[RMDB]
RNA sequence: GGGAACGACUCGAGUAGAGUCGAAAACAAACAGGUGGCCAUUAUGGACCUGGUGCGACACCACUUACGACUGCCGGAGAAACCGAGUAGUCGUCGCUACGCCACCCGCACCAACCACAACAAGCAGGGUGGUCAUAGUCUUCGGACUAUGACCACCAAAAGAAACAACAACAACAAC
Reactivity to 2A3 in 0.01 (KOAc 150mM, MgCl2 10mM, bicine 150mM(pH8.5), 24C), signal-to-noise 2, nucleotides 027 to 126: c050a010a050a000c040a010g010g000u040g060g040c090c030a120u210u140a080u300g120g040a060c000c030u000g020g020u000g000c010g030a000c000a010c100c020a040c050u070u060a000c000g000a000c000u020g000c000c010g090g000a300g130a130a080a060c000c010g000a170g030u040a000g000u000c000g020u040c010g040c110u110a020c050g020c000c000a070c000c000c000g000c000a010c000c010a000a090c030c010a080c040a180a190c050a190a000g170c080a090g000

Record summary
Source: RMDB library OK1LIB, as collected in RNAgym. The record gives the reactivity of an RNA of 177 nucleotides to 2A3. Reactivities are given for positions 27 through 126. The reactions ran in a buffer of 150 mM KOAc, 10 mM MgCl2 and 150 mM bicine (pH 8.5), at 24 C. The 2A3 profile rests on 789 reads.